This 177-nucleotide RNA was probed chemically with DMS and 2A3. Conditions: 150 mM KOAc, 10 mM MgCl2 and 150 mM bicine (pH 8.5), 24 C. 2A3 adducts were read by reverse transcription with SuperScript II with manganese. Source: RMDB library OK1LIB, as collected in RNAgym.
RNA sequence: GGGAACGACUCGAGUAGAGUCGAAAAGAAAAGUGAGCGAGGAGACUCACACACAAAUAAAGUGUGCGUGUCUGAGAGGUCACGCUCACGAUAACUCGCUCACGUGUGUGAGUCAAAGAAAAGAAAAGGGAUAGCUUAUCUUCGGAUAAGCUAUCCCAAAAGAAACAACAACAACAAC
Reactivity to DMS in 0.01 (KOAc 150mM, MgCl2 10mM, bicine 150mM(pH8.5), 24C), signal-to-noise 1, nucleotides 027 to 126: g000a100a160a000a030g000u000g020a040g000c000g030a060g080g040a130g000a000c020u000c030a010c000a010c050a000c080a070a060a160u020a060a120a170g000u030g000u000g010c030g020u000g000u010c020u010g020a290g020a090g050g000u000c020a000c060g000c000u020c000a000c000g100a030u000a140a150c040u050c020g000c000u010c020a070c230g090u000g010u000g000u000g000a000g000u000c000a070a040a060g020a000a080a050a080g000a060a050a170a130
Reactivity to 2A3 in 0.01 (KOAc 150mM, MgCl2 10mM, bicine 150mM(pH8.5), 24C), signal-to-noise 2, nucleotides 027 to 126: g060a020a020a000a000g100u080g040a030g000c100g010a010g080g150a120g020a040c000u000c000a010c000a000c000a000c000a000a190a000u220a210a090a030g000u000g010u010g000c000g000u010g000u020c020u030g050a040g000a040g140g030u010c000a000c000g050c000u000c000a000c000g000a000u050a020a080c040u020c000g020c010u040c080a100c070g010u000g000u000g030u000g010a000g020u000c000a010a000a160g080a090a080a010a000g070a030a070a020a030